RNA sequence: GGGAACGACUCGAGUAGAGUCGAAAAAGAGGAUGUUGAAGGAUUGUCCGAGUUCCGAACAGGCCAUGGCCCUCCUGGCUAAAAUUAAAGUACCAUCCUCAAAGGCCUCGUCUGUAUCUCUGGACGACCAGUGGAUCUUUUUCGAAAGAUCCACUGGAAAAGAAACAACAACAACAAC
Reactivity to 2A3 in 0.01 (KOAc 150mM, MgCl2 10mM, bicine 150mM(pH8.5), 24C), signal-to-noise 1, nucleotides 027 to 126: a000g020a000g030g020a030u050g050u240u180g100a130a010g020g050a100u090u220g010u000c010c020g010a000g000u110u010c040c030g000a070a010c000a010g030g000c040c000a030u140g010g050c000c000c040u070c010c020u060g030g020c030u060a120a130a010a040u260u270a100a200a000g040u030a030c010c000a030u020c000c040u030c000a030a080a010g010g000c020c000u040c030g050u020c020u080g100u090a100u050c030u000c060u150g000g000a010c010g020a030
Reactivity to DMS in 0.01 (KOAc 150mM, MgCl2 10mM, bicine 150mM(pH8.5), 24C), signal-to-noise 1, nucleotides 027 to 126: a100g030a010g000g040a020u000g010u000u020g000a120a080g050g010a070u000u010g020u000c000c000g010a040g030u010u010c080c070g010a110a060c040a080g000g000c050c060a170u030g010g010c000c000c180u010c120c040u020g000g020c020u010a000a060a090a080u030u000a100a140a150g010u010a090c180c000a060u000c000c030u010c000a100a070a130g000g010c040c030u000c180g010u000c040u020g010u000a040u000c010u020c030u010g020g000a020c010g030a090